Source: RMDB library OK1LIB, as collected in RNAgym. The record gives the reactivity of an RNA of 177 nucleotides to 2A3 and DMS. The DMS profile rests on 20,959 reads. Conditions: 150 mM KOAc, 10 mM MgCl2 and 150 mM bicine (pH 8.5), 24 C.
RNA sequence: GGGAACGACUCGAGUAGAGUCGAAAAGGGCUGAGCACUUGCAGUUUAUACGAACCGGUAAGUAUAUACUGCUUGGAUACGAACCGGUAAGUAUCCUUGAUGCUUCGGCAUCUUGUGCUCUGCCCAAGGGAAGGGCUACCUUCGGGUAGUUCUUCCCAAAAGAAACAACAACAACAAC
Reactivity to 2A3 in 0.01 (KOAc 150mM, MgCl2 10mM, bicine 150mM(pH8.5), 24C), signal-to-noise 9, nucleotides 027 to 126: g010g000g000c020u030g000a000g000c000a000c000u010u020g000c010a010g010u030u030u020a010u000a000c030g040a120a070c030c010g030g020u100a150a030g010u000a010u000a000u010a020c010u010g020c010u010u030g010g000a000u000a000c000g020a100a070c020c010g020g000u020a040a010g000u000a000u010c000c010u000u020g000a000u000g000c030u030u050c230g080g000c000a000u000c000u010u020g000u000g000c000u000c010u010g000c000c000c000a010a020
Reactivity to DMS in 0.01 (KOAc 150mM, MgCl2 10mM, bicine 150mM(pH8.5), 24C), signal-to-noise 5, nucleotides 027 to 126: g010g000g000c000u000g000a000g010c010a010c010u010u010g000c030a020g010u010u010u000a010u010a000c010g000a200a120c030c010g000g000u010a100a270g000u000a010u000a010u020a050c000u010g000c020u000u010g000g000a010u000a020c000g000a150a100c020c040g000g000u010a050a210g000u000a010u000c040c020u000u010g010a010u000g010c010u000u050c160g010g010c000a010u000c000u010u010g010u000g000c000u000c010u000g010c000c000c010a050a040